RNA sequence: GGGAACGACUCGAGUAGAGUCGAAAAGGAGGAAGGAUGUCGAAACCGAGAGGUCCUGAGGAAUCGCUUUUUAGAGUGUGACUAACAGAUUGUGUUAGUGUUUACUGCCUCCGUAAACCACUCUUCAGAAACCUCAGGCGACAGUGACGGAGGCUAACGAACUUCAGUAAUUCGUUACUGAAGUUCGAAAAGAAACAACAACAACAAC
Reactivity to DMS in 0.01 (KOAc 150mM, MgCl2 10mM, bicine 150mM(pH8.5), 24C), signal-to-noise 2, nucleotides 027 to 156: g030g020a060g040g000a070a030g020g000a080u000g010u010c050g030a110a090a070c080c020g000a150g000a150g010g000u000c010c000u000g000a060g030g010a040a300u000c030g020c130u000u000u020u000u000a030g000a050g020u000g000u000g010a100c020u000a010a030c010a050g010a230u000u010g020u000g000u000u000a000g000u010g000u000u000u000a040c040u000g000c000c010u000c020c010g020u000a030a050a140c020c010a020c010u000c000u000u000c140a120g020a040a060a300c020c020u000c010a050g020g000c080g010a050c070a070g020u000g010a060c010g000g030a030g000g010c030u000a010a110
Reactivity to 2A3 in 0.01 (KOAc 150mM, MgCl2 10mM, bicine 150mM(pH8.5), 24C), signal-to-noise 4, nucleotides 027 to 156: g030g010a020g010g020a040a010g020g030a050u050g000u070c040g030a090a050a070c000c020g010a030g010a020g060g040u030c000c000u010g000a000g000g030a000a020u040c030g040c090u100u140u060u100u150a010g010a000g000u030g040u150g110a040c000u010a010a000c020a130g250a300u240u260g130u020g000u100u000a000g000u000g020u040u010u020a010c010u000g000c000c000u000c010c000g000u000a000a010a000c010c000a000c010u020c000u110u080c060a040g030a010a020a010c000c000u000c000a000g010g000c000g010a000c010a020g040u040g040a020c010g060g000a000g000g000c010u010a030a020

Record summary
An RNA of 207 nucleotides, treated with DMS and 2A3 and read out base by base. The RNA was probed in 150 mM KOAc, 10 mM MgCl2 and 150 mM bicine (pH 8.5) at 24 C. For 2A3 the reverse transcriptase was SuperScript II with manganese.